[RMDB]
About this RNA
Chemical mapping of a 207-nucleotide RNA with 2A3. For 2A3 the reverse transcriptase was SuperScript II with manganese. Reactivities are given for positions 27 through 156. The RNA was probed in 150 mM KOAc, 10 mM MgCl2 and 150 mM bicine (pH 8.5) at 24 C.

RNA sequence: GGGAACGACUCGAGUAGAGUCGAAAAGCACAUGGGCAGUGGAUUUGAUGGUCAUCUCACAUCGUGCUAGCGAGGGAACCCUGUCCGGGGGUGAACCGCGAAACAGUACCGGACUCACCGUUUGGGAUCCUGUCUUUCGGAGUUCAAACGGUUAAACCCAGUCAUGAUACUUCGGUAUCAUGACUGGAAAAGAAACAACAACAACAAC
Reactivity to 2A3 in 0.01 (KOAc 150mM, MgCl2 10mM, bicine 150mM(pH8.5), 24C), signal-to-noise 2, nucleotides 027 to 156: g040c000a020c000a030u010g030g060g020c160a050g050u070g050g020a020u140u110u240g180a190u240g050g030u080c040a190u090c020u040c020a090c000a110u130c150g020u010g000c000u000a030g000c020g000a300g030g000g000a000a000c000c000c020u040g000u010c000c000g000g000g010g000g000u010g020a050a040c020c000g000c030g010a020a010a020c120a000g030u060a040c000c000g000g010a000c000u010c010a010c000c000g020u000u000u000g010g000g020a010u020c000c010u060g080u050c150u170u300u280c160g000g000a010g000u000u070c010a000a000a000c000g000g000u000u020a000a000a000c000